The data come from the RNA Mapping Database (RMDB), library OK3TST. An RNA of 207 nucleotides, treated with 2A3 and read out base by base. Reactivities are given for positions 27 through 156. For 2A3 the reverse transcriptase was SuperScript II with manganese. The RNA was probed in 150 mM KOAc, 10 mM MgCl2 and 150 mM bicine (pH 8.5) at 24 C.
[RMDB]
RNA sequence: GGGAACGACUCGAGUAGAGUCGAAAAUUGUUCAUCCUAUAUGUUUGCUACUUCGUAUCCUUAGGCCUACAUCUGCCCAUUUCCUCUCUCCUACUCCAAUCUUGAUAACCACUGUUUUAUUCUCUAUAUAUUUGACCUUUUUAAAAGAUUCCACAGGGUCCCAUAAGAUGUUCGCAUCUUAUGGGACAAAAGAAACAACAACAACAAC
Reactivity to 2A3 in 0.01 (KOAc 150mM, MgCl2 10mM, bicine 150mM(pH8.5), 24C), signal-to-noise 1, nucleotides 027 to 156: u080u080g020u090u070c090a060u070c030c040u090a050u060a040u140g050u010u030u070g090c020u000a090c030u010u080c020g030u040a110u030c000c040u020u040a020g080g000c000c000u030a040c020a060u020c030u090g010c000c010c020a040u040u110u050c000c000u030c020u000c000u020c020c030u000a050c030u000c010c020a000a170u000c040u010u120g010a050u040a120a020c010c010a030c060u000g080u050u050u000u000a030u090u000c000u000c010u060a020u010a020u040a070u300u070u080g020a060c000c000u080u100u050u110u000a030a090a030a000g070a090u150u260c000c210a040c000a040g300g030